[RMDB]
RNA sequence: GGGAACGACUCGAGUAGAGUCGAAAAGCAGUUAAAAAGCUCGUAGUUGAACCUUGGGCCUGGCUGGCCGGUCCGCCUAACCGCGUGUACUGGUCCGGCCGGGCCUUUCCUUCUGGGGAGCCGCAUGCGCUUUGCACAAAUUCGUUUGUGCAAAGCGAAAAGAAACAACAACAACAAC
Reactivity to DMS in 0.01 (KOAc 150mM, MgCl2 10mM, bicine 150mM(pH8.5), 24C), signal-to-noise 1, nucleotides 027 to 126: g010c010a140g000u030u040a000a020a120a230a100g010c030u000c070g000u000a040g000u010u030g010a070a270c140c000u000u020g030g000g000c000c010u010g010g060c000u050g000g000c030c040g010g000u010c020c010g010c040c000u010a190a130c300c300g000c000g000u070g000u070a000c000u000g040g030u030c000c010g030g000c000c010g000g020g000c000c000u000u020u000c000c040u010u060c050u000g000g040g030g050a040g000c070c120g010c080a100u000g000
Source: RMDB library RFM100, as collected in RNAgym. This 177-nucleotide RNA was probed chemically with DMS. For DMS, 1,282 sequencing reads were counted. The RNA was probed in 150 mM KOAc, 10 mM MgCl2 and 150 mM bicine (pH 8.5) at 24 C. DMS adducts were read by reverse transcription with MarathonRT.